[RMDB]
RNA sequence: GGGAACGACUCGAGUAGAGUCGAAAAAAAAAUAGCGUAAUCGACAUUGAGAAUGUAGGCUAAGUGUGUGUUGGAUACCUAACGUCCAAUUGAACACACACACAGUUGGACCUAAUGUCGAAAAAAACACUACGUACGUGUUCGCACGUACGUAGUGAAAAGAAACAACAACAACAAC
Reactivity to DMS in 0.01 (KOAc 150mM, MgCl2 10mM, bicine 150mM(pH8.5), 24C), signal-to-noise 2, nucleotides 027 to 126: a040a030a010a030a030u000a090g040c120g050u010a090a050u000c010g020a020c000a010u000u000g020a030g000a040a060u010g000u010a110g000g020c030u000a080a130g010u020g010u010g010u000g000u000u000g000g030a020u010a140c170c100u020a060a100c240g000u010c030c010a050a110u010u000g010a040a030c040a040c000a020c000a010c000a020c170a060g000u000u010g000g020a050c090c010u000a030a000u000g020u000c010g020a000a000a050a040a000a080a160
Reactivity to 2A3 in 0.01 (KOAc 150mM, MgCl2 10mM, bicine 150mM(pH8.5), 24C), signal-to-noise 2, nucleotides 027 to 126: a000a000a000a000a000u150a020g000c050g040u040a050a080u010c000g000a010c010a000u000u040g070a020g050a150a060u160g030u060a010g000g000c060u020a100a210g000u000g000u000g000u010g000u050u100g010g000a020u070a150c010c100u100a120a070c110g000u000c010c000a010a010u060u150g150a120a020c010a000c000a010c000a000c000a000c000a070g050u070u060g070g190a030c000c010u020a010a010u020g000u000c000g040a030a000a000a000a000a000a000
An RNA of 177 nucleotides, treated with DMS and 2A3 and read out base by base. The RNA was probed in 150 mM KOAc, 10 mM MgCl2 and 150 mM bicine (pH 8.5) at 24 C.